An RNA of 177 nucleotides, treated with DMS and read out base by base.

[RMDB]
RNA sequence: GGGAACGACUCGAGUAGAGUCGAAAACCAGACAGGAUACACAUGAGGGGGAUGGCUGAUGUCCCUGUGAGGGCUCAAACGUCACAGUGGUAAACGGGGGCUCCUGAUGGCUGGAAAAAGGCAAACGUCCUUCUAAGGGGUUCGCCCCUUAGAAGGAAAAAGAAACAACAACAACAAC
Reactivity to DMS in 0.01 (KOAc 150mM, MgCl2 10mM, bicine 150mM(pH8.5), 24C), signal-to-noise 2, nucleotides 027 to 126: c020c020a190g000a160c090a040g010g010a100u000a100c070a110c040a090u000g030a120g000g010g010g000g020a090u000g000g000c080u010g000a060u020g000u000c030c000c020u020g030u000g000a090g020g030g000c090u000c140a080a060a110c070g000u010c050a020c040a070g030u010g000g000u010a000a140a070c130g000g000g020g000g000c040u000c040c010u030g020a120u000g020g020c040u020g020g000a030a060a030a020a120g010g010c090a000a090a110c270g000
The reactions ran in a buffer of 150 mM KOAc, 10 mM MgCl2 and 150 mM bicine (pH 8.5), at 24 C.